[RMDB]
RNA sequence: GGGAACGACUCGAGUAGAGUCGAAAACAAGCGCGUCAGGUGCUCCGGAUGUUUGGAGCCGCUUCGCAAGCGGUGUCUGCGCGUGCGAGGGCGGCCUCCUGUGCGGCCAUACGCUUGCAACCUGGCCUCUAGUGUUGCUGUUCGCGGCGACGCUAGAAAAAGAAACAACAACAACAAC
Reactivity to 2A3 in 0.01 (KOAc 150mM, MgCl2 10mM, bicine 150mM(pH8.5), 24C), signal-to-noise 9, nucleotides 027 to 126: c030a010a010g030c030g020c030g030u020c010a000g000g000u010g000c000u000c000c000g040g060a130u100g140u140u130u160g020g000a000g000c000c010g000c010u070u050c050g000c000a000a010g000c000g010g030u040g040u030c030u060g010c000g000c010g050u020g020c110g000a010g010g020g050c010g080g240c000c000u000c000c000u000g000u010g000c000g000g000c010c000a000u070a080c010g000c000u010u010g000c000a010a010c000c000u000g010g000c000c000
Reactivity to DMS in 0.01 (KOAc 150mM, MgCl2 10mM, bicine 150mM(pH8.5), 24C), signal-to-noise 8, nucleotides 027 to 126: c070a100a060g000c070g010c270g020u000c010a010g000g010u010g000c010u000c020c010g010g000a130u030g010u020u020u030g010g000a030g000c010c130g000c040u000u020c120g000c000a010a010g000c000g000g010u020g000u010c050u010g000c000g000c000g010u010g010c110g010a020g000g000g010c000g010g000c030c000u000c000c000u010g010u000g000c020g000g000c050c010a000u000a090c010g010c020u000u000g000c000a090a020c010c000u000g000g010c010c260
Annotation
The record gives the reactivity of an RNA of 177 nucleotides to 2A3 and DMS. 2A3 adducts were read by reverse transcription with SuperScript II with manganese. Source: RMDB library OK1LIB, as collected in RNAgym. Conditions: 150 mM KOAc, 10 mM MgCl2 and 150 mM bicine (pH 8.5), 24 C. For DMS, 66,836 sequencing reads were counted.